[RMDB]
RNA sequence: GGGAACGACUCGAGUAGAGUCGAAAAUGACGUAAAACUGCUGACUCAUACAUACUGACACCGGUUGCUCAACAGGCUGUGUGGGACAAUAGAAUAACAAGGCUGUCAAUUUGAGCUUGACGGCUGCAAAACCUGCAGUACUUCGGUACUGCAGGAACGCAUUCAAAACCUUCGGGUUUUGAAUGCGAAAAGAAACAACAACAACAAC
Reactivity to 2A3 in 0.01 (KOAc 150mM, MgCl2 10mM, bicine 150mM(pH8.5), 24C), signal-to-noise 1, nucleotides 027 to 156: u100g020a010c040g000u030a000a030a190a100c030u090g030c020u100g060a050c000u020c000a000u000a090c000a050u230a100c000u030g160a030c020a030c140c010g120g000u030u070g010c050u030c020a040a030c000a070g020g000c040u010g030u030g000u000g010g000g020a070c040a000a070u060a030g100a050a120u200a170a100c060a160a090g060g010c000u030g030u010c000a000a030u000u030u120g030a030g030c000u000u000g000a000c030g030g000c040u010g000c030a070a070a000a130c020c000u000g000c030a000g000u000a000c000u000u040c080g020g000u000a000c060u000g000c000a000g000g000a010a000

Conditions: 150 mM KOAc, 10 mM MgCl2 and 150 mM bicine (pH 8.5), 24 C. This 207-nucleotide RNA was probed chemically with 2A3. For 2A3 the reverse transcriptase was SuperScript II with manganese. Values cover nucleotides 27 to 156.